[RMDB]
Conditions: 150 mM KOAc, 10 mM MgCl2 and 150 mM bicine (pH 8.5), 24 C. Structure probing data (2A3 and DMS) for a 177-nucleotide construct.
RNA sequence: GGGAACGACUCGAGUAGAGUCGAAAAGACAGGACCAGGCUCGUCCUGUCUCAUCGUCGCACUAUGGUGCGACGACGCGAUUCCGUGUUGAAUGACGUUUGCCCUCGUCUGGGCAACGUCCGGAGGAUACGUCGAGAUUAUUCGUAAUCUCGACGUAAAAAGAAACAACAACAACAAC
Reactivity to 2A3 in 0.01 (KOAc 150mM, MgCl2 10mM, bicine 150mM(pH8.5), 24C), signal-to-noise 4, nucleotides 027 to 126: g010a000c000a000g030g010a000c040c040a110g160g130c150u060c120g000u000c010c010u010g000u010c000u010c000a010u020c000g000u000c000g030c010a010c000u090a140u300g280g000u010g010c000g000a000c000g000a010c010g000c060g060a080u070u010c000c010g020u050g110u070u140g150a210a140u160g000a020c020g020u070u140u120g010c000c070c010u070c060g300u090c160u110g000g000g000c000a000a000c000g000u000c010c000g010g030a030g020g030a050
Reactivity to DMS in 0.01 (KOAc 150mM, MgCl2 10mM, bicine 150mM(pH8.5), 24C), signal-to-noise 6, nucleotides 027 to 126: g010a010c000a000g000g010a010c000c140a150g010g020c160u010c160g010u000c000c010u000g010u000c000u010c040a060u000c010g010u000c000g000c010a010c000u010a130u020g020g010u000g010c000g010a000c000g000a000c090g000c190g020a200u000u010c000c010g030u030g010u000u000g000a130a130u030g000a010c000g000u010u010u000g010c000c000c000u010c300g010u010c210u010g000g010g010c000a010a000c000g010u000c000c090g000g000a100g000g000a210

Annotation: Values cover nucleotides 27 to 126. Source: RMDB libraries RFM100 and RFMREP, as collected in RNAgym. For 2A3 the reverse transcriptase was SuperScript II with manganese. In probing experiments dimethyl sulfate is read out at A N1 and C N3, which are open when not base-paired.